[RMDB]
RNA sequence: GGGAACGACUCGAGUAGAGUCGAAAAGACGCCUUUAGAAGAAGAGGCUAGGGGGUAUUCCGGUGUGGGAUACUUAGUAAUAUGCAACGCUAAUUGCAUAAGAUUGUAGGAAGGAAUUUACAGUCUUUAGAGAUAAGCACGUUCGCGUGCUUAUCAAGACAAUCAACUUCUUCGGAAGUUGAUUGUCAAAAGAAACAACAACAACAAC
Reactivity to 2A3 in 0.01 (KOAc 150mM, MgCl2 10mM, bicine 150mM(pH8.5), 24C), signal-to-noise 4, nucleotides 027 to 156: g050a020c050g000c010c000u070u060u080a210g020a300a030g030a030a000g020a040g010g020c020u050a070g040g010g000g000g010u010a050u020u040c050c050g170g060u220g050u240g080g000g010a020u010a050c010u050u040a020g030u060a070a100u020a030u110g000c010a040a020c050g030c150u080a040a110u110u010g000c000a010u030a040a060g010a030u040u090g020u020a010g020g060a110a040g050g050a070a050u080u110u010a040c020a010g010u000c000u040u080u080a120g020a000g000a060u000a000a000g000c000a000c000g010u030u060c170g000c010g070u010g000c000u000u000a000u010c000a010a000
Reactivity to DMS in 0.01 (KOAc 150mM, MgCl2 10mM, bicine 150mM(pH8.5), 24C), signal-to-noise 1, nucleotides 027 to 156: g010a120c050g010c020c000u020u010u010a080g020a110a080g000a140a150g000a020g030g020c080u030a070g010g030g000g020g020u000a060u000u020c010c020g050g010u010g000u000g020g030g030a040u010a030c030u000u000a100g020u010a100a210u000a020u000g010c010a030a120c110g000c110u010a140a150u000u000g000c000a060u010a090a060g000a090u000u000g020u000a140g020g030a150a150g010g010a060a080u000u000u010a030c020a030g020u000c010u000u020u000a150g010a210g010a000u000a000a020g000c010a030c000g020u000u000c300g000c000g090u000g010c000u000u010a000u000c010a020a140
An RNA of 207 nucleotides, treated with 2A3 and DMS and read out base by base. Conditions: 150 mM KOAc, 10 mM MgCl2 and 150 mM bicine (pH 8.5), 24 C. For 2A3 the reverse transcriptase was SuperScript II with manganese. Source: RMDB library M2RFPK, as collected in RNAgym.